[RMDB]
RNA sequence: GGGAACGACUCGAGUAGAGUCGAAAACAAUUCGUCCUAGUGAACACCCUAAUUUCCAUCCUUAUCAGCAAGCGGAGAUCUAUCUUCACAAGCAUCUGUUAGGACGAUUUGGGACAUUACAUCCUCACCUCCUGAGGGCAUUCGUGCCCUCAGGAGGAAAAGAAACAACAACAACAAC
Reactivity to 2A3 in 0.01 (KOAc 150mM, MgCl2 10mM, bicine 150mM(pH8.5), 24C), signal-to-noise 1, nucleotides 027 to 126: c010a060a060u050u020c080g010u010c010c010u040a040g030u030g130a050a110c050a090c060c020c000u020a060a070u000u060u060c010c060a150u030c010c000u190u150a090u170c060a040g000c010a170a000g000c010g100g000a040g000a070u000c030u080a150u080c040u140u010c040a040c000a060a090g040c010a070u050c030u060g080u120u030a030g010g000a000c010g010a000u010u010u000g030g000g010a000c010a050u040u220a110c030a080u090c000c000u020c010a080
Record summary:
An RNA of 177 nucleotides, treated with 2A3 and read out base by base. It was measured as part of the RMDB library OK2TRN.